The data come from the RNA Mapping Database (RMDB), library OK2TRN. The record gives the reactivity of an RNA of 177 nucleotides to 2A3 and DMS. The RNA was probed in 150 mM KOAc, 10 mM MgCl2 and 150 mM bicine (pH 8.5) at 24 C. For DMS the reverse transcriptase was MarathonRT. Values cover nucleotides 27 to 126. The 2A3 profile rests on 2,160 reads.
RNA sequence: GGGAACGACUCGAGUAGAGUCGAAAAGUGCACUGCAACGACUCCAGGGACGAAGCGGGAUCGGGCCGUGACCGCCACGCCAACCUCGGCAGCGGCCAGAUUGAUCCUGACCUGCUGGUGGCUGCCGCGUUUGUCGGUAGUUCGCUACCGACAAACGAAAAGAAACAACAACAACAAC
Reactivity to 2A3 in 0.01 (KOAc 150mM, MgCl2 10mM, bicine 150mM(pH8.5), 24C), signal-to-noise 2, nucleotides 027 to 126: g040u050g020c040a030c130u140g000c020a080a080c050g070a040c030u000c010c020a020g070g010g060a040c080g090a170a020g060c010g020g000g040a050u060c040g020g060g000c040c010g030u020g010a060c020c040g000c070c030a070c030g040c000c100a070a060c010c020u060c050g000g000c010a010g010c040g030g000c010c000a030g040a090u140u210g050a060u090c020c040u060g090a130c020c000u050g040c000u010g030g010u030g160g020c000u000g010c000c000g020
Reactivity to DMS in 0.01 (KOAc 150mM, MgCl2 10mM, bicine 150mM(pH8.5), 24C), signal-to-noise 2, nucleotides 027 to 126: g000u000g020c050a080c070u010g020c040a090a070c080g000a050c030u010c060c060a060g000g020g020a100c070g020a080a070g000c040g010g020g000a070u000c060g030g020g010c060c060g000u000g010a120c070c020g000c030c050a070c100g010c020c020a060a090c100c070u000c050g010g000c020a060g020c010g000g010c000c010a040g000a110u000u020g000a060u020c010c010u000g010a100c100c040u000g030c020u010g000g030u000g020g020c010u010g020c000c030g010